[RMDB]
RNA sequence: GGGAACGACUCGAGUAGAGUCGAAAAUUAAUGAAGCAAAUCUGCAAACGCCAACGAUGAGCGUUUCGCAAUCGCCGCUUAAGGCUUUUGCCGAGGCUGCUUGAGCCUUGUUACCAAAGAAAAGCCGAAAACCCAAAUGUCUUCGGACAUUUGGGAACAAUGCGCUCUAGUUCGCUAGAGCGCAUUGAAAAGAAACAACAACAACAAC
Reactivity to 2A3 in 0.01 (KOAc 150mM, MgCl2 10mM, bicine 150mM(pH8.5), 24C), signal-to-noise 1, nucleotides 027 to 156: u260u210a070a050u110g050a020a000g040c000a030a080a110u030c090u130g010c010a000a000a000c000g000c010c000a040a110c190g250a280u130g010a040g020c000g010u000u000u040c030g000c000a000a070u060c020g040c150c010g110c070u100u170a050a120g000g010c000u000u000u020u040g010c020c000g000a020g040g000c020u050g100c030u110u140g020a010g000c000c000u000u020g000u040u160a100c100c010a050a050a030g050a010a100a000a060g000c000c050g020a000a000a120a060c000c000c000a000a000a000u000g000u000c000u000u040c160g160g000a000c000a020u000u000u000g000g000g000a000a000
Notes
Source: RMDB library M2RFPK, as collected in RNAgym. Structure probing data (2A3) for a 207-nucleotide construct. Reactivities are given for positions 27 through 156. The RNA was probed in 150 mM KOAc, 10 mM MgCl2 and 150 mM bicine (pH 8.5) at 24 C.